[RMDB]
About this RNA:
The record gives the reactivity of an RNA of 207 nucleotides to 2A3. Conditions: 150 mM KOAc, 10 mM MgCl2 and 150 mM bicine (pH 8.5), 24 C. 2A3 adducts were read by reverse transcription with SuperScript II with manganese.
RNA sequence: GGGAACGACUCGAGUAGAGUCGAAAAAAGGAUAUUCGUAUCCUUACCGAGGGGUCCCACGACGAUCUACAGCGACGAUCUAUACUGAAGCCUCCACGGUAUAGGGAGCUGGGGGAGUGGGACGGAGGCACCCGAAAUGCACGAGUUCGCUCGUGAAAGCCCCCUAAUAUUUCGAUAUUAGGGGGCUAAAAGAAACAACAACAACAAC
Reactivity to 2A3 in 0.01 (KOAc 150mM, MgCl2 10mM, bicine 150mM(pH8.5), 24C), signal-to-noise 2, nucleotides 027 to 156: a000a060g070g000a020u040a040u070u130c100g010u040a000u030c000c030u010u020a070c050c020g040a210g000g000g020g000u020c010c000c000a000c000g000a010c010g050a090u270c020u300a200c060a000g020c000g240a270c040g000a220u000c010u000a000u000a020c010u000g100a220a060g050c000c000u040c020c010a000c020g000g020u010a000u010a010g000g000g000a000g000c010u000g080g030g070g050g010a060g010u010g000g010g000a020c040g010g010a020g040g000c000a030c010c040c020g190a020a040a180u300g080c040a010c120g020a020g010u100u150c130g140c100u000c020g010u080g000a060a030